[RMDB]
The data come from the RNA Mapping Database (RMDB), library TTRINS. This 177-nucleotide RNA was probed chemically with DMS.

RNA sequence: GGGAACGACUCGAGUAGAGUCGAAAAGAUAUGGAUAUCAGAAAGCGAUGAACUACUUCCGCCCUCGCGGUCGGAAACGACCGAACUACGAGUAACAAGAAGCAUCGCUUUCUGAUAUCCUAAGUCAUCCUAAAAUGGAGUUCGCUCCAUUUUAGGAAAAAGAAACAACAACAACAAC
Reactivity to DMS in 0.01 (KOAc 150mM, MgCl2 10mM, bicine 150mM(pH8.5), 24C), signal-to-noise 3, nucleotides 027 to 126: g010a040u000a300u010g000g000a000u000a000u000c000a020g000a030a010a010g020c000g010a000u000g000a050a080c120u040a300c010u000u000c020c050g020c300c260c000u010c000g030c030g020g030u000c000g000g010a070a100a160c000g020a010c000c000g000a070a030c150u020a300c020g020a020g010u000a060a160c210a140a070g010a020a030g000c030a000u000c010g020c010u010u000u000c000u000g010a000u000a000u030c000c000u000a000a060g030u000c020a110
For DMS the reverse transcriptase was MarathonRT. The RNA was probed in 150 mM KOAc, 10 mM MgCl2 and 150 mM bicine (pH 8.5) at 24 C.